This 177-nucleotide RNA was probed chemically with DMS.
The RNA was probed in 150 mM KOAc, 10 mM MgCl2 and 150 mM bicine (pH 8.5) at 24 C.
RNA sequence: GGGAACGACUCGAGUAGAGUCGAAAAUUAAACCUUCCAUCCAUCCAAUAAGACUGACUCAGUCAAUAAGGAUGGAUGGAGGAUCCCAAUAAGACUGAGUCAGUCAGAAAAGCCGAAACGCAAAAAAACGAUUUAAUAAGUUCGCUUAUUAAAUCGUAAAAGAAACAACAACAACAAC
Reactivity to DMS in 0.01 (KOAc 150mM, MgCl2 10mM, bicine 150mM(pH8.5), 24C), signal-to-noise 3, nucleotides 027 to 126: u020u030a100a120a230c130c010u010u010c000c000a000u000c000c000a030u010c010c010a290a190u000a100a070g000a010c000u000g020a100c050u020c020a000g020u000c010a110a080u020a050a070g010g000a010u000g000g010a000u000g000g020a000g000g000a050u010c000c020c000a110a150u010a060a160g010a010c010u010g000a030g000u010c020a020g000u000c010a110g000a040a060a090a090g010c040c060g000a040a070a100c160g000c090a000a030a090a020a050a110